[RMDB]
RNA sequence: GGGAACGACUCGAGUAGAGUCGAAAAACACCAAAACUGAAAACGGAAGGCAAUCCUUCCACGACGAUACUUACUUUCCUUUGAUCGUCGUUACUACUGGCAUAGCCACAAAGGAGAACACACAUGAGCGCGGACACUGACUUCGGUCAGUGUCCAACCGUAGCCGUAAGUUCGCUUACGGCUACGGAAAAGAAACAACAACAACAAC
Reactivity to 2A3 in 0.01 (KOAc 150mM, MgCl2 10mM, bicine 150mM(pH8.5), 24C), signal-to-noise 2, nucleotides 027 to 156: a000c080a120c040c080a060a050a030a030c210u190g090a130a000a000a020c080g040g010a010a000g060g000c190a050a170u260c010c000u020u000c000c000a000c000g000a000c000g020a020u070a180c000u110u030a030c000u070u100u020c010c000u010u020u050g020a000u020c000g040u020c000g000u040u030a020c020u030a020c000u000g020g090c070a110u130a150g040c000c000a040c060a020a030a010g020g000a020g030a000a020c100a000c000a030c020a110u220g110a080g150c070g030c050g030g000a010c000a000c000u030g010a000c020u050u080c140g040g000u000c030a000g000u020g000u000c000c000a000a000